[RMDB]
RNA sequence: GGGAACGACUCGAGUAGAGUCGAAAAAUUGAUGCGAAGGGGGGACGGAGAACGCUAUGUUGGCCGGGCGACGGUUGUCCCGGUUUAAGCGUGUAGGCUGGUUUUCCAGGCAAAUCCGGAAAUUGAAGUCAAAGACGUAAUUCGUUACGUCUUUGACAAAAGAAACAACAACAACAAC
Reactivity to 2A3 in 0.01 (KOAc 150mM, MgCl2 10mM, bicine 150mM(pH8.5), 24C), signal-to-noise 1, nucleotides 027 to 126: a010u100u110g010a040u120g000c050g000a010a050g000g000g000g000g000g000a000c000g000g000a010g010a060a000c010g060c000u040a020u260g080u100u090g070g020c020c020g070g010g040c040g000a110c110g090g180u150u170g000u160c010c010c010g000g000u030u040u020a010a000g020c000g020u000g010u030a000g020g000c000u000g000g000u000u080u110u070c010c010a000g070g000c000a030a030a030u060c020c010g040g060a010a070a040u070u100g050a170a020
Reactivity to DMS in 0.01 (KOAc 150mM, MgCl2 10mM, bicine 150mM(pH8.5), 24C), signal-to-noise 5, nucleotides 027 to 126: a100u010u000g010a090u010g010c060g010a070a090g010g010g010g000g010g010a090c040g010g000a050g010a110a030c010g000c020u000a110u010g020u010u000g010g000c000c010g010g010g000c300g000a080c130g000g010u010u010g000u010c000c000c010g000g000u000u000u000a030a050g010c000g000u000g020u000a180g010g000c020u000g010g000u000u000u010u000c010c010a180g000g000c030a050a050a150u000c010c010g010g000a050a060a130u010u000g000a140a130